[RMDB]
RNA sequence: GGGAACGACUCGAGUAGAGUCGAAAAGCUACAAUUAACGAUCAACUUAGAACUGGUACGGACAAGGGGAAUCUGACUGUUAACGAGAUUCCCACUGUCCCUAUCUACUAUCUAGCGAGGCUGUCUGAUCAGGCAUUGCGUAAGCAGUAGAGUAGCCCUUCCGACUAGGCUUCGGCCUAGUCGGAAGAAAAGAAACAACAACAACAAC
Reactivity to 2A3 in 0.01 (KOAc 150mM, MgCl2 10mM, bicine 150mM(pH8.5), 24C), signal-to-noise 2, nucleotides 027 to 156: g030c030u080a050c050a110a150u090u160a050a020c080g020a010u120c040a020a130c020u040u100a030g010a070a040c030u010g020g000u030a010c010g000g000a000c000a010a040g000g000g000g010a000a000u000c000u010g080a060c080u200g090u220u160a090a020c020g030a000g000a030u000u000c000c000c000a000c000u000g010u000c000c000c000u000a000u000c000u000a050c000u050a040u180c000u010a000g080c000g020a030g000g120c010u000g030u000c030u010g110a120u090c010a010g010g010c030a050u040u180g000c000g050u050a000a150g050c070a020g050u040a010g000a040g030u050a000g010c050c000

Source: RMDB library PDB130, as collected in RNAgym. Chemical mapping of a 207-nucleotide RNA with 2A3. High 2A3 reactivity points to a flexible backbone, as in loops and unpaired stretches. For 2A3, 768 sequencing reads were counted. The RNA was probed in 150 mM KOAc, 10 mM MgCl2 and 150 mM bicine (pH 8.5) at 24 C.